RNA sequence: GGGAACGACUCGAGUAGAGUCGAAAAGACAAAUUCAAUCAGUGGAAAACUCCAGGCCACCUGCCCCAGUGCGCGCAGACGGCUCACUAACGCUUCCCCUGCGGGAGAGGGGCGGGUGAUCAGAAUAAAUUAAAUCCGCUUUCGAGCGGAUUUAAUUAAAAGAAACAACAACAACAAC
Reactivity to DMS in 0.01 (KOAc 150mM, MgCl2 10mM, bicine 150mM(pH8.5), 24C), signal-to-noise 2, nucleotides 027 to 126: g000a050c090a110a050a060u040u010c090a080a060u000c120a100g030u010g000g000a060a080a030a120c050u050c010c080a120g010g010c090c000a020c010c010u000g010c010c000c000c080a010g000u050g000c050g020c000g000c020a040g000a140c160g010g000c040u010c120a020c140u020a130a130c130g020c060u000u000c080c090c030c000u000g050c060g000g000g000a050g010a240g000g000g030g010c000g000g000g000u000g000a010u010c050a090g010a140a130u040a090
Reactivity to 2A3 in 0.01 (KOAc 150mM, MgCl2 10mM, bicine 150mM(pH8.5), 24C), signal-to-noise 2, nucleotides 027 to 126: g050a020c040a030a110a040u180u130c090a050a180u040c050a100g100u110g100g040a090a120a150a100c030u030c000c000a050g000g030c000c000a000c000c030u000g050c000c010c000c010a060g100u130g220c050g000c000g000c040a050g010a210c050g020g000c000u030c120a090c060u140a270a030c040g010c020u070u040c050c040c000c000u040g000c080g000g150g000a080g030a070g000g000g000g000c090g000g000g000u000g000a000u000c000a050g120a110a010u150a040
Chemical mapping of a 177-nucleotide RNA with DMS and 2A3. In probing experiments dimethyl sulfate is read out at A N1 and C N3, which are open when not base-paired. DMS adducts were read by reverse transcription with MarathonRT. Conditions: 150 mM KOAc, 10 mM MgCl2 and 150 mM bicine (pH 8.5), 24 C. For 2A3, 779 sequencing reads were counted. 2A3 adducts were read by reverse transcription with SuperScript II with manganese. For DMS, 2,084 sequencing reads were counted.